[RMDB]
RNA sequence: GGGAACGACUCGAGUAGAGUCGAAAACGGCAUCGAUCGCGGCAUAUCGGCCGAUCGAUAUGCUAGCUAGCGCAUUAGCCGAUCGGCUACGGCAUCGAUAUUAGCAUAUAUUACGAUCGUAAUAUCGGAUUUCUGGUGAGUUCGCUCACCAGAAAUCAAAAGAAACAACAACAACAAC
Reactivity to DMS in 0.01 (KOAc 150mM, MgCl2 10mM, bicine 150mM(pH8.5), 24C), signal-to-noise 1, nucleotides 027 to 126: c020g010g020c070a070u000c010g020a050u000c050g010c120g010g020c070a030u020a030u010c080g010g030c070c030g020a020u000c010g010a130u000a060u010g010c010u010a080g020c040u010a090g030c130g020c050a030u000u010a040g000c020c000g020a060u010c050g010g010c020u010a070c090g000g000c040a040u010c020g020a040u000a050u000u000a140g010c070a010u000a060u000a030u000u020a030c030g000a050u020c100g000u000a010a040u000a020u000c180g020
Reactivity to 2A3 in 0.01 (KOAc 150mM, MgCl2 10mM, bicine 150mM(pH8.5), 24C), signal-to-noise 2, nucleotides 027 to 126: c010g050g040c030a020u030c010g000a010u030c090g000c000g050g020c120a050u130a020u140c000g040g000c050c020g030a010u020c020g010a010u010a050u230g000c000u020a050g000c030u070a030g040c020g000c120a070u090u000a040g060c030c010g070a110u100c010g080g000c060u080a030c050g080g000c000a040u040c000g030a010u040a110u120u120a020g000c090a050u070a000u010a040u210u100a060c060g090a250u190c130g030u020a020a050u000a070u000c050g110